[RMDB]
RNA sequence: GGGAACGACUCGAGUAGAGUCGAAAACCUCACUACAUUUUACUGUGCCUAAAGAAUUUGUGACAGGUACAGUAAAACGUAUUGCAAGGUUUAUCAGUUCCUAUAAACAGGUAAAUAACAAUAUAUGAAAAGCAAAGACUGUUCGCAGUCUUUGCAACAAGCAUAGACAGUUCGCUGUCUAUGCUUGAAAAGAAACAACAACAACAAC
Reactivity to DMS in 0.01 (KOAc 150mM, MgCl2 10mM, bicine 150mM(pH8.5), 24C), signal-to-noise 3, nucleotides 027 to 156: c000c000u010c020a040c030u000a030c010a010u000u000u000u000a000c010u000g010u000g010c000c000u000a130a120a140g010a140a180u000u000u000g030u010g030a240c170a070g000g010u000a010c010a010g020u010a000a000a010a010c020g020u000a010u000u010g010c020a100a000g010g050u000u000u010a130u000c100a160g020u010u000c000c000u010a190u000a100a120a110c100a110g010g000u000a050a050a080u010a110a130c020a080a100u010a150u010a120u010g000a080a080a110a140g020c000a010a000a040g010a040c000u000g040u000u000c300g020c040a010g000u000c000u020u000u000g010c010a030a030
Reactivity to 2A3 in 0.01 (KOAc 150mM, MgCl2 10mM, bicine 150mM(pH8.5), 24C), signal-to-noise 8, nucleotides 027 to 156: c000c000u010c000a010c010u010a000c000a030u000u010u000u000a000c000u000g000u010g000c000c000u120a150a130a100g140a280a280u240u260u270g150u070g070a050c060a060g000g000u000a000c000a000g000u000a000a000a000a000c000g000u000a000u010u020g030c080a090a060g030g000u020u010u020a170u090c030a010g010u000u000c010c010u030a060u160a090a070a020c060a030g060g070u110a080a140a070u180a150a030c050a120a030u120a020u070a060u230g100a080a120a020a020g000c000a000a000a010g000a000c000u010g040u050u080c210g000c080a000g000u000c010u000u000u000g000c000a000a000
Source: RMDB library M2RFOK, as collected in RNAgym. The record gives the reactivity of an RNA of 207 nucleotides to DMS and 2A3. In probing experiments dimethyl sulfate is read out at A N1 and C N3, which are open when not base-paired. The DMS profile rests on 4,756 reads.